[RMDB]
RNA sequence: GGGAACGACUCGAGUAGAGUCGAAAAAAGGAUCAUCUUUCUCCGCCAUGGCAUCUGGUCUUACCACACACCAAUACGUUUCACUGGCCAAUAAGACCAUCCUCACCAUUGUCCAAAUUGAAACGCCUGAAGCGGUCUCCAAUGCCGAGGAGAUCGCCGUAGUUAGAUGGUUCGCCAUCUAACUACGAAAAGAAACAACAACAACAAC
Reactivity to 2A3 in 0.01 (KOAc 150mM, MgCl2 10mM, bicine 150mM(pH8.5), 24C), signal-to-noise 4, nucleotides 027 to 156: a000a010g070g010a090u100c040a020u030c090u030u090u000c020u020c030c010g000c030c020a060u060g040g000c010a060u000c080u070g020g000u030c040u050u100a110c060c040a070c030a010c020a030c110c000a090a070u130a170c060g030u010u010u030c050a050c050u010g020g000c000c000a040a030u090a070a030g040a030c040c030a050u080c010c040u070c010a090c080c000a040u030u040g010u010c000c020a040a130a190u070u070g030a070a060a020c050g070c040c050u110g040a080a000g010c000g010g010u010c000u000c000c000a090a120u120g060c010c020g030a030g010g000a000g010a000u010c000g000c000
The record gives the reactivity of an RNA of 207 nucleotides to 2A3. It was measured as part of the RMDB library OK3TST. For 2A3, 2,948 sequencing reads were counted. Values are in units of 0.01, from 0 to 300, in steps of 10.